The data come from the RNA Mapping Database (RMDB), library OK2TRN.
This 177-nucleotide RNA was probed chemically with DMS and 2A3.

[RMDB]
RNA sequence: GGGAACGACUCGAGUAGAGUCGAAAAUAUGGCGCGCGCCAGAGGAUCGCGCGAUCGGCGCCGGAUCAGACGUACAGUACAGUACCGUACUAUGGCCGGCCGAGACGAUCCGACAUCGGAUCCGGCGGCUAGCGGAGGGAUUCGUCCCUCCGCUAGCAAAAGAAACAACAACAACAAC
Reactivity to DMS in 0.01 (KOAc 150mM, MgCl2 10mM, bicine 150mM(pH8.5), 24C), signal-to-noise 3, nucleotides 027 to 126: u010a060u000g010g020c010g000c040g020c060g000c050c030a140g020a160g000g000a030u000c020g010c040g010c080g020a040u000c020g030g010c140g010c040c010g000g000a040u010c010a030g000a130c280g010u010a010c040a010g020u010a110c220a170g010u020a030c040c070g010u000a010c020u000a220u000g000g000c010c000g000g010c040c050g000a090g000a090c080g000a020u000c030c010g000a140c190a110u000c060g010g000a050u010c020c020g010g010c070g010
Reactivity to 2A3 in 0.01 (KOAc 150mM, MgCl2 10mM, bicine 150mM(pH8.5), 24C), signal-to-noise 2, nucleotides 027 to 126: u250a080u060g050g010c040g020c010g000c020g020c030c020a060g120a120g140g030a060u010c020g000c010g030c070g090a050u050c020g030g010c110g020c050c020g010g020a190u120c020a000g000a020c030g010u020a020c020a040g010u030a040c020a110g140u070a060c050c020g000u010a020c020u010a060u060g030g000c020c000g000g030c020c010g020a030g000a020c030g020a040u000c010c010g040a090c040a180u260c040g030g000a030u010c020c020g050g030c000g000
DMS adducts were read by reverse transcription with MarathonRT. 2A3 is a SHAPE reagent: it acylates the 2'-hydroxyl of flexible nucleotides of all four kinds. The reactions ran in a buffer of 150 mM KOAc, 10 mM MgCl2 and 150 mM bicine (pH 8.5), at 24 C. For 2A3, 3,012 sequencing reads were counted.